[RMDB]
Source information: The data come from the RNA Mapping Database (RMDB), library OK3TST. An RNA of 207 nucleotides, treated with 2A3 and read out base by base. For 2A3, 530 sequencing reads were counted. Reactivities are given for positions 27 through 156.

RNA sequence: GGGAACGACUCGAGUAGAGUCGAAAAGGAAGUUCUGCUGAGGGGCUACUCAAAAACUCAUCUCGCCAACUUAAUGUUUCGUUCAACAAAGAUAAUGUUUCAGCACAAUCUCUGGCGCAGCAGAUGCAGGUUCCAGUAGAUGAACUGGCUGACCUGCCGUUCUGCAGAACUUCGGUUCUGCAGAACGAAAAGAAACAACAACAACAAC
Reactivity to 2A3 in 0.01 (KOAc 150mM, MgCl2 10mM, bicine 150mM(pH8.5), 24C), signal-to-noise 1, nucleotides 027 to 156: g010g040a050a020g000u070u000c030u050g000c010u040g020a060g010g020g050g040c010u090a070c010u050c100a070a150a040a070a060c050u030c020a070u050c050u040c060g030c050c010a000a110c100u140u110a150a060u180g070u050u090u080c060g060u090u100c020a070a030c050a100a130a000g030a110u160a150a120u150g010u000u100u110c030a030g000c030a040c010a040a070u010c080u030c030u120g000g000c050g000c020a040g000c010a000g080a090u080g040c010a000g000g040u060u000c000c000a000g000u020a020g030a130u270g020a170a070c000u010g000g000c040u050g020a030c000c000u000g030c000